Structure probing data (2A3 and DMS) for a 177-nucleotide construct. For 2A3 the reverse transcriptase was SuperScript II with manganese. The DMS profile rests on 8,999 reads. The reactions ran in a buffer of 150 mM KOAc, 10 mM MgCl2 and 150 mM bicine (pH 8.5), at 24 C.
RNA sequence: GGGAACGACUCGAGUAGAGUCGAAAAAUUCAUCGCGGCUUGUUAACGCUUUACCAAAAUGAAUUAUUUGUAAGUGAAAAUGAUUUAAUGGUUGCAUGGAUUAAUCAAGGUGAACUCAUAAUUGCUGUAUAGGUUCCUAUUUCGAUAGGAACCUAUAAAAAGAAACAACAACAACAAC
Reactivity to 2A3 in 0.01 (KOAc 150mM, MgCl2 10mM, bicine 150mM(pH8.5), 24C), signal-to-noise 4, nucleotides 027 to 126: a000u010u040c010a020u040c160g000c010g020g010c030u120u200g030u100u100a100a030c010g010c000u060u090u060a040c040c040a070a090a010a100u200g080a040a130u120u080a120u110u100u040g070u040a060a050g020u050g110a080a050a090a150u130g080a090u060u030u150a020a090u050g010g000u010u000g000c020a000u010g010g020a000u020u050a080a060u140c090a060a030g120g010u090g070a070a040c040u010c090a020u070a240a120u180u180g140c050u030g000
Reactivity to DMS in 0.01 (KOAc 150mM, MgCl2 10mM, bicine 150mM(pH8.5), 24C), signal-to-noise 5, nucleotides 027 to 126: a040u000u000c010a040u010c110g040c110g010g010c060u000u030g030u010u000a060a070c120g010c020u010u010u020a090c080c060a020a080a050a090u020g000a110a080u030u030a060u000u010u010g010u040a060a100g000u010g000a050a040a090a050u030g010a070u020u000u010a040a070u000g010g010u000u010g030c020a030u010g010g000a040u010u000a030a100u020c060a060a070g000g010u000g000a050a060c100u020c080a070u040a040a090u020u010g010c040u010g020